[RMDB]
The record gives the reactivity of an RNA of 177 nucleotides to DMS and 2A3.
The DMS profile rests on 17,092 reads.
For DMS the reverse transcriptase was MarathonRT.
The 2A3 profile rests on 13,437 reads.
The RNA was probed in 150 mM KOAc, 10 mM MgCl2 and 150 mM bicine (pH 8.5) at 24 C.
RNA sequence: GGGAACGACUCGAGUAGAGUCGAAAAGGACUAGGGUAUUAACUGACGACAUAACGAUGGUAGUCCACAGAUGGUAAAGAGUCCUUAAGGGCGGUGUGUGAGGUAACGCACCUCAACACCAUAGGACGAAUCAACAAAGUUUCGACUUUGUUGAUUCAAAAGAAACAACAACAACAAC
Reactivity to DMS in 0.01 (KOAc 150mM, MgCl2 10mM, bicine 150mM(pH8.5), 24C), signal-to-noise 7, nucleotides 027 to 126: g010g000a040c010u010a070g020g000g010u020a030u020u020a080a110c060u010g010a160c190g020a060c080a050u030a100a050c080g030a140u020g000g010u020a060g010u000c010c150a190c100a050g000a080u020g000g000u020a020a050a090g000a100g000u000c000c000u010u010a090a100g020g000g020c090g010g010u000g010u000g020u010g000a010g000g000u000a100a130c270g020c240a060c000c010u000c000a040a020c000a010c000c000a080u010a060g000g000a100c100
Reactivity to 2A3 in 0.01 (KOAc 150mM, MgCl2 10mM, bicine 150mM(pH8.5), 24C), signal-to-noise 7, nucleotides 027 to 126: g010g010a020c040u070a050g090g040g040u100a140u150u110a200a080c040u060g060a030c050g030a030c050a100u170a190a030c090g070a040u060g080g050u070a020g020u010c020c010a040c000a020g130a060u130g020g000u070a080a080a040g100a050g020u000c010c000u050u090a090a090g110g050g070c090g040g000u010g000u030g060u040g010a000g000g020u050a160a040c190g010c100a000c000c000u000c000a000a000c000a000c000c010a020u060a020g000g010a010c050